An RNA of 177 nucleotides, treated with DMS and 2A3 and read out base by base. Reactivities are given for positions 27 through 126. For DMS the reverse transcriptase was MarathonRT. Conditions: 150 mM KOAc, 10 mM MgCl2 and 150 mM bicine (pH 8.5), 24 C. In probing experiments dimethyl sulfate is read out at A N1 and C N3, which are open when not base-paired. For 2A3, 2,656 sequencing reads were counted.
[RMDB]
RNA sequence: GGGAACGACUCGAGUAGAGUCGAAAAAGAGCGCGAUUCGCGAACGCGGACGUCCAUCGGCCUCGCCACGGCCGCAGCCGCCGGCACCAGUGUCAUCGAGCUGCCGGCCGGCGACGUCAUGGUCAUCUACUCGAACGUUUUUCGAAACGUUCGAGUAAAAAGAAACAACAACAACAAC
Reactivity to DMS in 0.01 (KOAc 150mM, MgCl2 10mM, bicine 150mM(pH8.5), 24C), signal-to-noise 2, nucleotides 027 to 126: a130g000a070g020c080g010c000g000a110u000u020c060g020c050g000a040a060c100g010c060g000g020a010c130g000u020c040c010a040u000c120g010g010c030c090u010c090g030c010c070a130c090g010g000c020c000g010c020a100g000c000c030g010c220c050g000g000c000a050c070c210a100g070u010g040u010c060a090u000c030g000a150g000c050u000g000c160c090g010g020c020c010g010g080c000g000a050c300g040u000c010a010u020g000g000u000c020a120u030c100
Reactivity to 2A3 in 0.01 (KOAc 150mM, MgCl2 10mM, bicine 150mM(pH8.5), 24C), signal-to-noise 4, nucleotides 027 to 126: a000g070a040g010c050g000c020g110a300u100u140c080g030c070g040a110a020c100g010c030g030g030a040c050g010u010c000c000a040u060c100g010g010c000c000u000c010g000c000c040a200c140g000g000c010c020g000c010a000g000c000c020g030c030c030g000g000c000a010c040c070a130g100u010g030u120c030a080u140c020g010a060g020c000u020g030c040c060g010g000c000c010g000g000c000g010a000c000g010u000c010a010u020g010g010u070c040a070u020c060